Structure probing data (DMS and 2A3) for a 177-nucleotide construct.
For DMS, 1,113 sequencing reads were counted.
The RNA was probed in 150 mM KOAc, 10 mM MgCl2 and 150 mM bicine (pH 8.5) at 24 C.
For DMS the reverse transcriptase was MarathonRT.
RNA sequence: GGGAACGACUCGAGUAGAGUCGAAAAGGAGACAAAAUCAAGCAACCUGGCCCAAUCAGUGAAGGUGCAAACACUAGGUGAUGAUGUGGUUCUGUCAAACAAUUCAUUGACAAAGAUACAUGAUCCAAACGUCUCACAGAUUCGUCUGUGAGACGUUAAAAGAAACAACAACAACAAC
Reactivity to DMS in 0.01 (KOAc 150mM, MgCl2 10mM, bicine 150mM(pH8.5), 24C), signal-to-noise 2, nucleotides 027 to 126: g020g010a130g000a100c170a070a020a090a130u030c060a120a050g010c030a100a100c030c010u020g000g030c000c010c020a110a110u000c140a030g010u010g000a090a050g020g000u000g020c130a090a050a030c120a060c100u010a040g000g020u000g020a040u000g030a030u000g020u000g000g000u000u000c110u010g010u040c000a020a010a070c230a140a090u000u010c170a090u010u000g000a020c070a030a030a090g000a080u030a060c020a010u020g000a060u020c040c040a100
Reactivity to 2A3 in 0.01 (KOAc 150mM, MgCl2 10mM, bicine 150mM(pH8.5), 24C), signal-to-noise 2, nucleotides 027 to 126: g090g030a120g020a040c040a080a120a010a170u090c060a090a000g030c020a040a050c010c010u040g030g030c000c010c020a010a080u090c010a030g020u020g150a120a030g100g010u030g000c050a060a170a000c080a020c040u080a040g050g180u140g050a070u010g030a000u020g000u000g030g010u060u020c010u030g030u080c000a000a010a070c060a080a160u300u180c060a040u060u060g040a020c040a080a130a030g010a010u040a010c000a010u100g020a000u080c020c010a000